[RMDB]
RNA sequence: GGGAACGACUCGAGUAGAGUCGAAAAGACGCCUGUGUGGCGAAGCGAGUAUGAGAAAGUGCCGCAAAUUAAACAGUCCAUCUAGCGGCAAGAUGGAUUGCUCGCAAAAAGAUCCAUAUCACUGAGAGGGAGUAAUGAUAUUCGUAUCAUUACUCCCAAAAGAAACAACAACAACAAC
Reactivity to 2A3 in 0.01 (KOAc 150mM, MgCl2 10mM, bicine 150mM(pH8.5), 24C), signal-to-noise 3, nucleotides 027 to 126: g060a010c030g050c010c010u210g080u080g070u140g100g020c000g020a010a000g010c020g000a020g000u030a070u230g120a070g190a140a170a010g130u070g030c000c010g040c030a130a130a120u200u200a010a050a090c080a040g080u000c000c000a000u000c000u020a080g000c000g010g000c000a020a010g000a000u000g000g000a000u010u030g030c030u000c000g000c000a040a000a000a000a000g080a030u020c000c010a010u100a030u160c130a080c110u170g060a030g010a060
Reactivity to DMS in 0.01 (KOAc 150mM, MgCl2 10mM, bicine 150mM(pH8.5), 24C), signal-to-noise 3, nucleotides 027 to 126: g010a170c030g000c000c000u020g000u040g010u070g020g010c000g000a170a130g030c000g000a040g030u020a060u010g000a300g030a100a040a030g020u010g020c010c040g000c030a100a100a110u050u030a060a050a200c120a130g000u000c050c010a030u000c050u010a100g040c000g000g000c010a000a000g010a050u000g020g010a100u000u000g000c010u020c030g000c000a140a050a040a040a060g000a080u000c020c030a080u050a070u020c130a080c070u010g000a060g010a300